The data come from the RNA Mapping Database (RMDB), library M2PK50. Chemical mapping of a 177-nucleotide RNA with DMS.
RNA sequence: GGGAACGACUCGAGUAGAGUCGAAAAACUUCCUACUUCGGUAGGAAGUAAAAGUAGAAAAGUUGGUGCUUAGACCACGCCCUCUACCGUAAAAAUAGAUAAACCCUUAGCACUUCGGUGCUAAGAACCCAAAGGUCUAUUUCGAUAGACCUUUGGGAAAAGAAACAACAACAACAAC
Reactivity to DMS in 0.01 (KOAc 150mM, MgCl2 10mM, bicine 150mM(pH8.5), 24C), signal-to-noise 1, nucleotides 027 to 126: a030c000u000u000c000c000u000a010c000u000u030c130g050g040u000a000g020g000a000a000g000u000a000a040a100a040g030u000a000g010a020a020a010a020g020u010u010g000g000u010g000c280u010u000a120g020a060c000c000a010c010g000c010c010c040u000c000u000a000c010c070g020u050a030a090a050a090a070u020a070g000a170u010a050a070a070c060c060c010u010u000a010g000c000a010c000u010u030c210g030g010u000g010c000u000a000a000g000a050a110

Reactivities are given for positions 27 through 126. The reactions ran in a buffer of 150 mM KOAc, 10 mM MgCl2 and 150 mM bicine (pH 8.5), at 24 C.